The record gives the reactivity of an RNA of 177 nucleotides to 2A3 and DMS. For DMS, 1,446 sequencing reads were counted. For DMS the reverse transcriptase was MarathonRT.
[RMDB]
RNA sequence: GGGAACGACUCGAGUAGAGUCGAAAAUAUGUUUAUAGAAAACGUGGCGGGGCAGAUAUAUCAUAUUCAAAAGGAUUGCUGGUACUUACAACUCAGACACCUCUGCAGCCUAAUGACUGAAACCCUACGAUCAGACAUCUUUCGAGAUGUCUGAUCGAAAAGAAACAACAACAACAAC
Reactivity to 2A3 in 0.01 (KOAc 150mM, MgCl2 10mM, bicine 150mM(pH8.5), 24C), signal-to-noise 2, nucleotides 027 to 126: u230a040u070g010u030u000u040a180u060a060g240a030a090a040a010c110g000u050g000g000c040g030g000g000g050c030a010g120a030u050a000u010a000u230c080a050u030a040u060u230c120a130a000a080a030g070g000a110u170u100g060c000u000g040g040u000a060c000u080u050a040c090a150a010c020u080c100a000g000a170c040a050c050c000u000c020u110g020c030a010g030c000c000u040a080a020u040g050a010c040u040g110a150a200a200c020c010c000u000a060
Reactivity to DMS in 0.01 (KOAc 150mM, MgCl2 10mM, bicine 150mM(pH8.5), 24C), signal-to-noise 1, nucleotides 027 to 126: u060a040u020g000u000u000u000a040u020a060g010a150a040a000a060c080g030u010g000g030c030g030g020g000g020c050a040g000a000u000a050u000a060u040c000a080u000a060u030u010c130a060a010a140a100g010g000a040u010u000g010c000u000g000g030u000a070c130u010u010a090c210a050a110c250u000c060a040g030a170c090a060c040c020u000c070u040g020c020a030g020c030c060u010a040a030u040g000a080c060u000g000a060a040a140c000c010c000u010a190